[RMDB]
RNA sequence: GGGAACGACUCGAGUAGAGUCGAAAACAUUGUUCUGAUCAUCUGAAGAUCAGCUAUUAGAAGAGAAAGAUCAGUUAAGUCCUUUGGUCCUGAUCAGCUUGAUACAAGAACUACUGAUUUCAACUUCAAAACGGGUGCUACUUCGGUAGCACCCGAACUUAAGGCUAAGCUUCGGCUUAGCCUUAAGAAAAGAAACAACAACAACAAC
Reactivity to DMS in 0.01 (KOAc 150mM, MgCl2 10mM, bicine 150mM(pH8.5), 24C), signal-to-noise 2, nucleotides 027 to 156: c080a150u000u010g020u000u010c000u010g010a020u000c010a140u010c110u000g000a300a300g000a020u000c000a080g000c220u010a110u010u000a200g010a120a030g030a070g030a130a110a060g060a010u000c050a040g030u000u000a090a110g000u000c000c010u000u010u000g030g030u010c040c050u010g020a210u030c130a120g000c060u000u000g000a090u000a100c140a120a040g050a000a020c000u000a110c010u000g000a030u000u000u000c000a100a160c030u010u000c020a040a010a120a200c060g020g020g020u000g040c010u000a000c000u000u000c230g050g000u010a030g020c010a000c040c010c000g020a010a000
Reactivity to 2A3 in 0.01 (KOAc 150mM, MgCl2 10mM, bicine 150mM(pH8.5), 24C), signal-to-noise 2, nucleotides 027 to 156: c050a080u100u200g030u240u110c010u010g000a000u010c000a040u000c110u210g180a180a070g000a030u000c000a010g020c020u100a090u250u130a040g010a010a010g030a010g040a030a090a000g030a020u000c000a000g020u070u220a120a010g030u050c000c020u070u040u190g000g020u030c020c000u080g070a270u160c070a080g150c010u060u060g010a020u080a190c010a000a010g000a050a000c000u060a020c010u070g020a010u000u040u000c030a100a050c000u030u020c010a020a020a020a020c010g010g000g000u000g000c000u000a000c000u010u120c190g070g000u000a000g000c000a010c000c000c000g000a000a000